[RMDB]
RNA sequence: GGGAACGACUCGAGUAGAGUCGAAAACAGUGGCGAUGUGACCUGCGGAUAUCCUGGCACACUCAACUCUUCUCUCUAUUAGCUCAUGGCGUCCUGGUCACACUGACGCUGGUUGCGCCUUGGCCUCGUGGUUAGACGUUUUCGAACGUCUAACCACAAAAGAAACAACAACAACAAC
Reactivity to DMS in 0.01 (KOAc 150mM, MgCl2 10mM, bicine 150mM(pH8.5), 24C), signal-to-noise 2, nucleotides 027 to 126: c040a020g010u000g000g010c050g030a060u000g020u000g000a030c010c000u010g010c140g000g000a020u000a100u010c000c000u000g000g040c040a120c200a060c070u010c060a070a100c130u020c050u020u000c050u010c020u010c090u000a140u000u000a130g010c050u010c010a000u000g030g030c300g020u000c140c030u010g000g000u000c010a090c060a070c060u010g000a010c030g000c000u010g000g000u000u000g010c090g000c030c030u010u020g020g010c100c040u000c170
Reactivity to 2A3 in 0.01 (KOAc 150mM, MgCl2 10mM, bicine 150mM(pH8.5), 24C), signal-to-noise 1, nucleotides 027 to 126: c020a000g010u020g010g010c020g020a060u010g020u000g020a070c010c000u060g000c120g030g020a060u030a070u210c010c010u030g020g020c010a000c000a010c060u130c050a040a130c040u040c040u190u080c020u020c020u000c050u030a150u190u180a110g010c010u070c160a070u120g000g020c010g000u030c050c020u000g020g010u020c010a010c030a000c040u040g000a000c000g000c060u030g070g000u040u100g030c000g080c000c040u020u080g060g030c020c030u110c030